Chemical mapping of a 207-nucleotide RNA with 2A3 and DMS. 2A3 adducts were read by reverse transcription with SuperScript II with manganese. The RNA was probed in 150 mM KOAc, 10 mM MgCl2 and 150 mM bicine (pH 8.5) at 24 C. For DMS, 2,028 sequencing reads were counted.
[RMDB]
RNA sequence: GGGAACGACUCGAGUAGAGUCGAAAACAUAAGCAUGCCAAUGACUGCCUGUAGAUCAUUACUGCCAGAGCACUUUCAUGCACCAAAUGUGAGCAUGACCAUUUGGCUGCCGUCUCUUCAGUGAUGGGAAAAGGAGGGAAAUGUGACUUCCUUUAUAACGGAGGGAUUUAUUCGUAAAUCCCUCCGUAAAAGAAACAACAACAACAAC
Reactivity to 2A3 in 0.01 (KOAc 150mM, MgCl2 10mM, bicine 150mM(pH8.5), 24C), signal-to-noise 3, nucleotides 027 to 156: c030a030u120a090a030g010c010a020u050g020c030c020a070a120u160g060a110c070u080g040c030c010u100g060u170a040g030a070u060c010a010u000u080a010c010u000g040c090c080a000g000a000g050c110a010c040u110u210u170c070a050u180g030c020a010c020c010a010a040a050u060g050u050g010a020g050c080a070u070g060a070c000c010a000u010u020u010g060g020c100u020g000c000c000g060u000c000u010c000u010u000c000a000g000u010g000a030u020g000g000g020a050a070a000a010g030g000a020g000g040g040a050a140a060u110g020u030g050a020c000u020u050c000c020u160u150u300a160u300a020
Reactivity to DMS in 0.01 (KOAc 150mM, MgCl2 10mM, bicine 150mM(pH8.5), 24C), signal-to-noise 1, nucleotides 027 to 156: c070a160u010a100a130g020c010a010u010g060c000c040a150a140u000g000a150c020u010g000c020c000u010g000u000a090g000a160u010c030a100u010u000a050c000u010g010c060c150a070g010a030g020c030a100c140u020u010u000c130a090u020g000c010a100c000c010a010a030a100u000g020u050g010a140g000c090a100u000g050a300c210c010a060u000u000u000g010g010c060u020g000c000c050g000u000c020u000c000u010u000c020a050g000u000g020a050u000g040g030g010a050a060a100a070g000g010a020g000g030g010a020a070a160u010g000u030g000a140c050u000u010c000c010u030u000u000a060u020a130